The data come from the RNA Mapping Database (RMDB), library M2RFPK.
Chemical mapping of a 207-nucleotide RNA with DMS and 2A3.
For 2A3, 1,506 sequencing reads were counted.
For DMS, 2,212 sequencing reads were counted.
2A3 adducts were read by reverse transcription with SuperScript II with manganese.
RNA sequence: GGGAACGACUCGAGUAGAGUCGAAAAGGGCCAUGUACCUAUCCAAAAUGAGAUCCCAUCUUGCACACUGUACUAAUUUGAGAUUCUCAUGCCUCCUACUUGGAGAGAUCUGGACUAGAAGUCAGGGAAUAGGUCGUUUCUUUCGAGAAACGACCAAGUUAAAGGCAACGUUCGCGUUGCCUUUAACAAAAGAAACAACAACAACAAC
Reactivity to DMS in 0.01 (KOAc 150mM, MgCl2 10mM, bicine 150mM(pH8.5), 24C), signal-to-noise 1, nucleotides 027 to 156: g000g030g030c010c040a100u020g010u000a050c030c040u000a100u000c030c030a110a120a110a100u000g010a070g010a120u000c020c010c010a100u010c070u000u010g030c070a070c020a200c070u000g040u000a050c060u010a070a100u010u000u010g010a090g020a040u000u020c010u020c000a040u000g000c000c050u000c060c030u010a120c120u000u000g040g010a090g000a070g000a100u010c050u000g030g000a030c040u000a060g010a060a100g020u000c000a050g010g010g050a070a090u000a120g040g010u000c010g000u000u000u010c000u010u000u000c230g010a020g030a020a010a000c010g000a000c000c000a000a030
Reactivity to 2A3 in 0.01 (KOAc 150mM, MgCl2 10mM, bicine 150mM(pH8.5), 24C), signal-to-noise 1, nucleotides 027 to 156: g030g010g020c050c030a040u150g040u090a090c020c020u070a020u020c010c040a040a100a020a120u090g000a020g000a040u010c000c000c010a030u040c040u060u150g070c100a040c020a030c100u100g060u200a030c040u120a060a190u020u050u090g090a080g010a060u250u030c010u010c030a010u100g050c010c000u000c000c000u060a170c070u090u160g020g010a020g000a000g010a020u030c020u070g010g030a040c010u040a040g040a190a030g040u030c040a010g020g030g050a070a140u140a150g000g020u010c010g020u010u000u000c000u010u030u040c090g100a020g000a020a000a000c000g000a010c000c000a000a000